[RMDB]
This 177-nucleotide RNA was probed chemically with DMS.

RNA sequence: GGGAACGACUCGAGUAGAGUCGAAAAGGUAGGAGCGUGGUACUGUCUGAUAUACUCUCAGCCAGUCAGAUUGGGUAACAUGUGGAUGGAGAAGACAGCAUGGCCAGUCCAGGGCUAGACACUGGGGCGCUUUAUGUGGAUUCGUCCACAUAAAGCGAAAAGAAACAACAACAACAAC
Reactivity to DMS in 0.01 (KOAc 150mM, MgCl2 10mM, bicine 150mM(pH8.5), 24C), signal-to-noise 4, nucleotides 027 to 126: g000g000u000a040g010g010a070g020c090g030u010g010g020u010a050c030u000g010u000c010u010g000a060u010a140u010a120c170u010c130u000c030a050g020c050c020a040g010u010c110a050g020a100u000u000g020g010g010u000a110a070c120a050u000g010u010g010g020a070u000g030g000a070g000a090a060g000a070c080a060g010c060a040u000g010g000c030c030a110g000u010c040c040a080g010g000g000c050u010a080g020a080c050a060c060u000g010g010g010g010
The DMS profile rests on 4,235 reads.